Structure probing data (2A3) for a 207-nucleotide construct. For 2A3 the reverse transcriptase was SuperScript II with manganese.

RNA sequence: GGGAACGACUCGAGUAGAGUCGAAAAGAACUUUGGCCGGCUCGGAAUAGAAUCAGGGGGUGCAAACUGCCCACUGGCAGAAAGUAUUAUAGCAAAUGCGUACCCUAUUGCAAUACAGCCCGGCCAACAUAGACUACUCUAUUCGUAGAGUAGUCAAGGAAGACUUCUGUUUCGACAGAAGUCUUCCAAAAGAAACAACAACAACAAC
Reactivity to 2A3 in 0.01 (KOAc 150mM, MgCl2 10mM, bicine 150mM(pH8.5), 24C), signal-to-noise 1, nucleotides 027 to 156: g000a020a040c020u050u020u000g000g000c010c000g020g000c020u030c030g080g020a070a020u120a170g070a050a060u110c060a120g000g040g010g050g000u040g010c010a030a160a100c010u020g000c000c010c010a150c150u210g010g000c000a000g000a000a110a000g120u090a080u200u060a110u210a030g030c010a070a110a090u020g000c050g000u060a040c000c000c000u050a070u020u170g070c070a050a030u060a130c000a000g070c050c030c000g050g040c000c000a000a000c010a030u040a020g000a000c000u000a000c000u060c000u000a110u110u110c230g050u030a000g000a000g000u000a000g000u010c000a000a000
For 2A3, 561 sequencing reads were counted.